[RMDB]
RNA sequence: GGGAACGACUCGAGUAGAGUCGAAAAUAAAAAGGUAAUGUAUCAGACGCUAUGAAGCCUGCACGUAGCAAAACCGAAAGGGUCUGAUACAUUACGACUGAAGGAGGCACGGUCAAAACAAAAAAAACAACUGUUAUUUCUUCGGAAAUAACAGUUGAAAAGAAACAACAACAACAAC
Reactivity to 2A3 in 0.01 (KOAc 150mM, MgCl2 10mM, bicine 150mM(pH8.5), 24C), signal-to-noise 2, nucleotides 027 to 126: u120a000a080a000a020a000g200g000u000a010a000u010g010u020a000u000c000a000g000a000c000g000c000u000a010u010g050a140a070g040c010c000u030g040c070a020c030g010u000a010g000c020a000a190a300a160c030c000g050a050a000a000g000g010g000u000c010u010g010a000u010a000c000a000u000u000a000c010g000a000c010u030g030a080a050g080g040a010g010g020c010a000c030g010g010u020c040a020a080a070a020c100a060a090a000a010a010a040a010a030
Reactivity to DMS in 0.01 (KOAc 150mM, MgCl2 10mM, bicine 150mM(pH8.5), 24C), signal-to-noise 1, nucleotides 027 to 126: u010a060a060a070a060a080g010g000u000a010a000u000g000u000a000u010c010a000g010a040c020g000c010u000a020u000g030a080a120g010c010c010u010g010c010a300c020g000u000a000g020c000a140a070a190a060c000c020g010a090a060a140g010g050g010u000c000u010g020a000u020a000c000a020u000u000a010c000g010a000c020u000g000a050a090g010g000a050g010g010c040a160c070g000g000u010c020a110a130a080a080c140a070a020a020a090a010a020a080a150